Chemical mapping of a 207-nucleotide RNA with DMS and 2A3. The RNA was probed in 150 mM KOAc, 10 mM MgCl2 and 150 mM bicine (pH 8.5) at 24 C. Source: RMDB library OK3TST, as collected in RNAgym. DMS adducts were read by reverse transcription with MarathonRT. For 2A3, 2,731 sequencing reads were counted.

RNA sequence: GGGAACGACUCGAGUAGAGUCGAAAAAGAUGAAGUCUAAUGGUGAGGAUGUGCUUGAGGAAGUAGAGCGAUAUGUCACCACUACCGAACGAUUGAAGGCUACUAAAAUGGCAUACGAUAUGAUAACACCGCAGUCCCUUGACCUCAACGUGCAUAAGCACAUAUGCUAGUUCGCUAGCAUAUGUGCAAAAGAAACAACAACAACAAC
Reactivity to DMS in 0.01 (KOAc 150mM, MgCl2 10mM, bicine 150mM(pH8.5), 24C), signal-to-noise 1, nucleotides 027 to 156: a150g020a110u020g010a110a080g010u000c060u030a070a060u010g000g020u000g010a040g040g000a070u010g020u000g000c020u000u000g000a030g010g030a050a120g030u000a090g060a030g020c030g060a120u010a060u000g030u020c030a010c010c110a050c040u000a100c020c020g020a050a070c060g020a200u010u000g030a110a080g030g000c020u000a240c070u000a010a050a110a150u000g020g020c020a080u000a070c050g010a140u010a060u020g000a090u020a010a120c070a090c040c000g000c040a110g000u020c000c040c020u000u000g010a120c000c030u000c030a050a020c080g020u010g030c020a090u020a130a280
Reactivity to 2A3 in 0.01 (KOAc 150mM, MgCl2 10mM, bicine 150mM(pH8.5), 24C), signal-to-noise 5, nucleotides 027 to 156: a020g060a040u170g050a020a010g040u040c070u160a070a050u100g040g010u050g020a030g070g030a040u070g020u030g060c020u060u050g070a040g030g040a100a030g010u080a030g030a030g050c040g040a080u020a060u140g040u020c010a000c030c030a010c030u050a050c020c060g040a040a030c040g060a100u050u120g070a080a050g050g030c020u020a000c020u070a040a060a140a090u110g030g000c050a020u040a060c050g080a040u040a010u210g110a090u030a130a030c040a020c020c040g010c040a010g020u040c020c000c000u000u060g020a050c000c020u040c050a040a030c110g020u050g000c040a040u030a200a020